Structure probing data (2A3 and DMS) for a 177-nucleotide construct.
The DMS profile rests on 4,204 reads.
DMS adducts were read by reverse transcription with MarathonRT.
For 2A3 the reverse transcriptase was SuperScript II with manganese.
[RMDB]
RNA sequence: GGGAACGACUCGAGUAGAGUCGAAAAAAUUCGAGGGGUAAGGAGAACAGUGCUUUGUUGGUACUAUCCCUUUUACCAAGCUGAGCUUUCAAAUAAUGAACGUGGGGUCAUGGGCUCUUAACCAUGAACCCUUGGGAGAAUUCGUUCUCCCAAGGGUAAAAGAAACAACAACAACAAC
Reactivity to 2A3 in 0.01 (KOAc 150mM, MgCl2 10mM, bicine 150mM(pH8.5), 24C), signal-to-noise 3, nucleotides 027 to 126: a000a000u170u130c100g010a040g040g030g040g010u040a070a030g050g010a150g020a110a060c050a040g060u040g120c020u150u210u200g100u070u110g050g030u020a010c010u020a020u030c020c000c000u060u020u000u000a010c010c000a030a020g030c060u090g040a010g010c020u040u150u170c090a210a230a210u290a150a170u220g050a050a020c070g060u130g010g040g040g000u010c000a020u010g000g010g000c000u040c000u130u050a020a020c020c000a020u020g020a020
Reactivity to DMS in 0.01 (KOAc 150mM, MgCl2 10mM, bicine 150mM(pH8.5), 24C), signal-to-noise 4, nucleotides 027 to 126: a070a070u000u000c090g010a080g010g000g030g020u000a020a050g010g010a150g020a050a070c120a030g000u000g000c080u000u000u010g010u010u000g010g000u000a070c050u000a090u000c010c010c000u000u000u000u010a070c020c000a070a080g010c080u000g010a100g010c060u010u000u010c070a060a090a100u010a110a080u000g000a040a040c110g010u000g000g010g010g010u000c000a030u000g000g000g010c180u000c130u000u000a090a120c020c020a040u000g010a060
Source information: For 2A3, 2,071 sequencing reads were counted.